[RMDB]
RNA sequence: GGGAACGACUCGAGUAGAGUCGAAAAGGGCGCGCAGGUGUUCUUGACCGACAUCGUCGACGCGGCCGUGCUCGAGGCGUUCGCGGCCGAGCUCAACGAUACGGCCGGCGAGCGCAUUGCGUGGGCACAUCAUCGGGUGAUUCGUCACCCGAUGAUGAAAAGAAACAACAACAACAAC
Reactivity to DMS in 0.01 (KOAc 150mM, MgCl2 10mM, bicine 150mM(pH8.5), 24C), signal-to-noise 4, nucleotides 027 to 126: g010g010g010c020g000c020g030c040a300g010g010u000g000u000u010c020u000u000g010a170c290c230g000a040c020a010u000c010g000u000c030g010a300c000g010c000g000g010c020c000g010u000g010c000u000c010g000a110g000g000c020g020u000u000c020g050c010g010g010c010c000g010a110g010c110u010c180a060a100c270g010a080u010a080c040g000g000c000c010g020g020c010g010a020g010c020g000c000a030u000u000g020c100g030u010g000g000g010c020a130
Reactivity to 2A3 in 0.01 (KOAc 150mM, MgCl2 10mM, bicine 150mM(pH8.5), 24C), signal-to-noise 2, nucleotides 027 to 126: g020g020g000c000g010c010g030c050a020g000g010u010g040u080u080c040u040u080g080a080c000c020g000a010c010a020u010c020g200u090c110g050a140c000g010c000g010g030c000c050g000u020g000c000u010c010g030a040g070g000c010g000u020u020c000g000c000g000g000c000c010g010a030g040c050u050c150a130a120c090g060a090u120a200c000g030g010c000c000g090g100c000g010a010g000c040g020c030a070u010u140g020c100g040u200g010g010g000c010a010

The record gives the reactivity of an RNA of 177 nucleotides to DMS and 2A3.
DMS adducts were read by reverse transcription with MarathonRT.
The RNA was probed in 150 mM KOAc, 10 mM MgCl2 and 150 mM bicine (pH 8.5) at 24 C.